[RMDB]
RNA sequence: GGGAACGACUCGAGUAGAGUCGAAAAACGCUGAUUACGAUCAGCGAAUGAGUUGGUUAUACAUUCUUGCGGUAUUAAAGUAACAGCAAGAAUUUUAACCAACACAAGCUCACUUACGAGUGAGCAAUUCCAUCAAAUUUUUCGAAAUUUGAUGGAAAAAAGAAACAACAACAACAAC
Reactivity to 2A3 in 0.01 (KOAc 150mM, MgCl2 10mM, bicine 150mM(pH8.5), 24C), signal-to-noise 9, nucleotides 027 to 126: a000c010g000c000u010g010a010u040u080a060c250g060a030u010c000a000g000c020g020a020a100u150g050a030g010u000u000g000g000u010u000a020u000a050c080a050u000u000c000u000u000g000c010g030g020u080a090u130u270a240a140a130g120u110a120a040c010a010g000c000a000a000g000a000a000u000u010u000u000a000a000c000c000a000a000c010a000c000a050a030g000c000u000c010a000c000u020u060a040c240g070a010g010u000g000a000g000c000a000a030
Reactivity to DMS in 0.01 (KOAc 150mM, MgCl2 10mM, bicine 150mM(pH8.5), 24C), signal-to-noise 8, nucleotides 027 to 126: a120c020g010c000u000g000a010u010u000a110c170g030a050u000c000a000g020c000g010a070a040u010g000a110g010u000u000g000g000u010u010a000u010a030c200a020u000u000c000u000u000g000c000g000g010u000a110u040u020a090a120a170g010u040a080a030c020a050g010c000a010a000g000a010a000u000u000u000u000a000a010c000c000a000a000c000a070c120a080a100g000c000u000c000a000c000u010u010a140c190g020a050g010u000g000a010g000c010a050a030
Description:
Chemical mapping of a 177-nucleotide RNA with 2A3 and DMS. 2A3 adducts were read by reverse transcription with SuperScript II with manganese. DMS (dimethyl sulfate) methylates the pairing face of unpaired adenines and cytosines. DMS adducts were read by reverse transcription with MarathonRT. Source: RMDB libraries RFM100 and RFMREP, as collected in RNAgym.